[RMDB]
RNA sequence: GGGAACGACUCGAGUAGAGUCGAAAACAACGCGGGGCCCAGCGUGAUUAGGCGGCGCACCAGCAUGGGAACGCUCCAGUGCAGCAGCCCCUGCAUGAUCAUCGCGCCGGCGUAAGCACCCACCGACCUCAGGUAGCUUUUUCGAAAGCUACCUGAGAAAAGAAACAACAACAACAAC
Reactivity to DMS in 0.01 (KOAc 150mM, MgCl2 10mM, bicine 150mM(pH8.5), 24C), signal-to-noise 2, nucleotides 027 to 126: c080a110a020c100g020c040g040g010g000g000c040c040c050a180g000c080g000u000g000a100u000u000a080g000g020c020g010g000c050g040c020a130c120c050a080g000c040a020u010g000g000g030a130a260c120g000c040u020c010c130a130g040u010g010c080a040g000c050a110g010c300c020c040c020u020g000c040a100u040g000a060u010c090a040u000c090g040c000g040c010c000g040g000c040g000u000a080a030g040c100a100c020c030c030a080c120c140g000a100c110
Reactivity to 2A3 in 0.01 (KOAc 150mM, MgCl2 10mM, bicine 150mM(pH8.5), 24C), signal-to-noise 1, nucleotides 027 to 126: c020a010a060c040g040c010g040g000g050g000c000c000c060a000g000c020g060u040g020a060u080u130a020g100g000c030g030g000c020g020c040a060c000c020a040g030c030a050u170g020g000g000a170a030c050g020c050u040c060c070a090g080u090g100c050a030g020c000a020g030c020c000c000c010u050g000c030a070u050g000a050u100c070a020u180c120g000c000g000c030c000g020g040c020g000u020a050a020g020c010a070c000c010c000a000c020c040g070a090c000